[RMDB]
RNA sequence: GGGAACGACUCGAGUAGAGUCGAAAAUUGAGUGAGGUAAUCGGUUAAUAGCGGGUCUUCGAUGUUGCUAUUGCUUUCACGAUAUUCCCAAUUACCGAGGUAGUCGUAGCUGAGUUCAUCGCGGAACCCUAAGUGUCGACUUCGGUCGACACUUAGGAAAAGAAACAACAACAACAAC
Reactivity to DMS in 0.01 (KOAc 150mM, MgCl2 10mM, bicine 150mM(pH8.5), 24C), signal-to-noise 1, nucleotides 027 to 126: u010u000g010a300g010u010g020a050g010g010u000a080a090u010c050g000g020u010u000a040a020u000a020g000c000g020g000g000u000c120u010u010c110g030a020u010g000u000u000g000c020u000a040u000u000g000c010u000u000u000c000a050c010g000a150u000a090u000u000c010c010c000a140a090u000u000a070c040c010g000a080g010g010u000a050g020u000c050g050u020a130g020c070u020g010a090g010u000u010c010a050u000c110g000c170g010g010a090a070c140
Reactivity to 2A3 in 0.01 (KOAc 150mM, MgCl2 10mM, bicine 150mM(pH8.5), 24C), signal-to-noise 1, nucleotides 027 to 126: u090u070g040a010g020u040g000a010g060g060u080a060a070u080c040g010g010u110u280a050a000u010a050g050c010g020g140g040u050c090u240u160c140g020a040u000g040u110u050g010c010u020a020u060u060g010c000u130u280u050c010a000c030g010a040u010a040u020u000c000c000c000a010a030u050u020a050c000c040g010a010g070g000u060a030g010u020c040g010u050a020g010c060u050g040a000g140u110u070c020a040u050c100g020c060g130g060a120a130c020